Chemical mapping of a 177-nucleotide RNA with DMS and 2A3.
Source: RMDB library TTRDEL, as collected in RNAgym.
For DMS, 7,092 sequencing reads were counted.
Values are in units of 0.01, from 0 to 300, in steps of 10.
[RMDB]
RNA sequence: GGGAACGACUCGAGUAGAGUCGAAAAGAUAUGGAUCCAGGUGCCAGCUGAGGUUCGGAAACGAACCCAGCGGUAAACCGGAUCCUAAGUCUAAACACAGCACAGUCGUUCGCGACUGUGCUGUGAAGUGUUAGGAUAAGUUCGCUUAUCCUAACACAAAAGAAACAACAACAACAAC
Reactivity to DMS in 0.01 (KOAc 150mM, MgCl2 10mM, bicine 150mM(pH8.5), 24C), signal-to-noise 4, nucleotides 027 to 126: g000a000u010a300u010g010g000a000u000c000c000a040g020g010u000g000c000c010a130g050c000u000g010a120g020g000u000u000c000g010g000a060a090a180c010g000a010a000c000c000c000a000g010c010g000g000u000a010a050a050c000c000g000g010a000u000c000c010u000a010a100g000u000c010u000a080a110a230c000a000c000a000g000c000a010c010a000g000u000c000g020u010u010c250g020c020g010a010c000u010g020u000g000c000u000g000u000g000a010a060
Reactivity to 2A3 in 0.01 (KOAc 150mM, MgCl2 10mM, bicine 150mM(pH8.5), 24C), signal-to-noise 4, nucleotides 027 to 126: g010a010u050a030u140g000g010a010u000c030c060a140g050g020u030g060c120c210a270g000c200u030g060a130g140g000u000u000c000g020g000a090a110a060c010g000a000a010c010c000c010a010g000c010g000g000u020a060a010a010c010c000g000g000a000u000c000c000u000a050a020g000u000c010u030a020a070a010c010a000c020a010g040c010a010c000a010g020u020c010g100u170u250c300g050c020g170a000c010u000g010u000g010c010u000g000u000g000a000a000